RNA sequence: GGGAACGACUCGAGUAGAGUCGAAAACAGUCAAAGUGAAGGCGGGCCAGACCAUCGCCGCAUUCUACCAGAGCACCGUCAUGAUCUUUGGCACGAUGGCUCGCUACAUGCACAGAGUUAGGGAAAAAUUAUUUACUACUUUCGAGUAGUAAAUAAUAAAAGAAACAACAACAACAAC
Reactivity to DMS in 0.01 (KOAc 150mM, MgCl2 10mM, bicine 150mM(pH8.5), 24C), signal-to-noise 9, nucleotides 027 to 126: c080a140g010u010c060a050a090a100g010u000g010a160a120g000g010c010g010g010g000c020c030a090g010a120c100c070a060u000c080g010c040c050g010c100a050u000u000c060u010a080c070c040a090g010a070g010c080a060c040c020g020u000c070a070u010g000a090u000c020u000u000u000g010g010c030a080c130g000a100u000g000g000c020u000c040g010c020u000a060c090a070u000g010c050a060c070a090g000a110g010u010u000a070g010g000g010a020a050a080a090
Reactivity to 2A3 in 0.01 (KOAc 150mM, MgCl2 10mM, bicine 150mM(pH8.5), 24C), signal-to-noise 5, nucleotides 027 to 126: c040a010g070u070c030a040a090a030g030u030g060a070a020g030g000c010g010g000g010c020c020a020g030a090c030c020a070u090c050g040c070c020g000c010a020u130u040c020u070a100c010c030a040g010a020g080c040a070c110c030g060u060c050a230u110g040a060u040c020u040u040u040g000g000c030a010c050g070a080u070g010g010c010u010c010g000c010u060a050c030a090u160g040c050a020c010a070g080a020g060u050u110a060g000g030g000a020a100a040a040

Conditions: 150 mM KOAc, 10 mM MgCl2 and 150 mM bicine (pH 8.5), 24 C.
The record gives the reactivity of an RNA of 177 nucleotides to DMS and 2A3.
The DMS profile rests on 18,466 reads.
High DMS reactivity at an A or C suggests that its Watson-Crick edge is free.
2A3 adducts were read by reverse transcription with SuperScript II with manganese.
Values cover nucleotides 27 to 126.
Source: RMDB library OK2TRN, as collected in RNAgym.
For 2A3, 11,300 sequencing reads were counted.